An RNA of 207 nucleotides, treated with 2A3 and read out base by base. For 2A3, 1,161 sequencing reads were counted. Conditions: 150 mM KOAc, 10 mM MgCl2 and 150 mM bicine (pH 8.5), 24 C.

RNA sequence: GGGAACGACUCGAGUAGAGUCGAAAAGCAUAGUGUUCGCACUAUGCAAAAAAACCUUUGUGCUGCCAUGCGAGCUUGGAUUUACUGAUCCCAUUGGGAUCAGUUGUCAGCUCCAUGGGCAGCACUCUGGUAAAAAAGCAUUAGUUCGCUAAUGCAAGUUAGUCCCAUUGUUCGCAAUGGGACUAACAAAAGAAACAACAACAACAAC
Reactivity to 2A3 in 0.01 (KOAc 150mM, MgCl2 10mM, bicine 150mM(pH8.5), 24C), signal-to-noise 2, nucleotides 027 to 156: g000c000a000u000a000g000u050g040u080u130c300g060c080a020c010u000a010u020g000c010a020a020a020a020a020a020a020c000c000u020u020u000g000u000g000c000u000g000c000c000a010u000g050c190g090a000g000c010u100u150g160g010a100u300u250u180a090c010u000g000a000u000c000c030c080a300u220u300g000g000g000a010u000c000a000g000u000u010g000u000c000a000g000c000u030c000c000a000u000g000g060g000c000a000g000c000a000c000u000c000u000g000g020u080a110a080a000a040a050a000g020c000a000u000u020a000g040u040u110c140g000c150u020a000a000u010g000c000a000a040